Record summary:
Structure probing data (2A3 and DMS) for a 177-nucleotide construct. The 2A3 profile rests on 3,816 reads. For DMS the reverse transcriptase was MarathonRT. It was measured as part of the RMDB library M2PK50. 2A3 adducts were read by reverse transcription with SuperScript II with manganese. 2A3 is a SHAPE reagent: it acylates the 2'-hydroxyl of flexible nucleotides of all four kinds.

RNA sequence: GGGAACGACUCGAGUAGAGUCGAAAAUGUGACAUGUUCGCAUGUCACAAGCCAGGUAGUUCCUAUCUCAAUUACCUGUACAGGCCAUGGUCUGGAUACGAAAGCUCUACCUAUUCGUAGGUAGAAAGAGUUGUAGUAACUUCGGUUACUACAACUCAAAAGAAACAACAACAACAAC
Reactivity to 2A3 in 0.01 (KOAc 150mM, MgCl2 10mM, bicine 150mM(pH8.5), 24C), signal-to-noise 3, nucleotides 027 to 126: u080g010u000g000a000c000a000u000g020u030u120c280g000c100a000u020g020u010c000a000c010a020a000g050c010c020a020g040g010u010a020g030u010u060c030c020u110a180u150c110u030c070a050a150u050u040a030c000c010u000g010u040a050c020a020g000g040c010c020a110u240g050g010u000c010u030g090g010a100u100a160c090g110a120a090a040g000c020u000c000u010a000c010c000u020a020u040u030c240g060u020a000g020g010u010a000g020a010a030a000
Reactivity to DMS in 0.01 (KOAc 150mM, MgCl2 10mM, bicine 150mM(pH8.5), 24C), signal-to-noise 3, nucleotides 027 to 126: u000g000u000g000a010c000a010u000g000u000u030c220g030c040a020u000g010u000c000a000c010a050a090g010c120c010a030g000g000u000a060g010u000u000c060c040u000a110u000c150u010c160a060a050u010u000a030c010c010u000g010u010a100c070a040g000g010c020c040a080u000g060g010u000c010u010g020g010a160u000a060c180g010a070a070a060g000c120u000c010u000a010c000c000u000a020u000u010c190g020u000a010g000g000u000a020g000a010a100a100